The record gives the reactivity of an RNA of 177 nucleotides to DMS and 2A3. The reactions ran in a buffer of 150 mM KOAc, 10 mM MgCl2 and 150 mM bicine (pH 8.5), at 24 C. 2A3 adducts were read by reverse transcription with SuperScript II with manganese. As a SHAPE reagent, 2A3 marks flexible, mostly unpaired nucleotides at the ribose 2'-OH.
[RMDB]
RNA sequence: GGGAACGACUCGAGUAGAGUCGAAAAUGCCAGGGGUUCGCCCCUGGCACAUUACCGAGUAAGCAGCUCGGUAUAAAACUGCAACCCUUGGAAACAAGGGAAACUUUGACACAUUCGUGUGUCAAAAACCUAGUAAUCUAUUCGUAGAUUACUAGGUAAAAGAAACAACAACAACAAC
Reactivity to DMS in 0.01 (KOAc 150mM, MgCl2 10mM, bicine 150mM(pH8.5), 24C), signal-to-noise 5, nucleotides 027 to 126: u000g000c000c000a010g000g010g010g020u000u010c250g030c000c000c000c000u010g000g010c000a000c040a020u000u000a090c000c000g010a020g000u000a090a190g010c180a160g000c020u000c000g000g000u000a010u000a030a060a080a120c120u000g000c080a130a210c000c000c000u000u000g000g000a170a100a200c000a000a010g000g000g010a010a050a040c120u000u010u000g000a000c000a000c000a030u000u010c220g020u000g010u000g000u000c000a000a000a020a110
Reactivity to 2A3 in 0.01 (KOAc 150mM, MgCl2 10mM, bicine 150mM(pH8.5), 24C), signal-to-noise 3, nucleotides 027 to 126: u040g000c000c010a010g010g010g010g000u030u040c100g080c010c000c000c000u000g000g000c000a000c000a000u000u030a020c000c010g000a000g000u080a180a160g100c080a010g020c070u000c000g000g010u010a000u000a010a000a000a010c040u070g020c030a060a170c000c000c000u000u000g020g020a060a050a020c000a000a000g000g010g000a030a000a010c010u020u000u020g000a000c000a000c000a020u030u120c170g080u030g000u000g010u020c020a000a000a000a010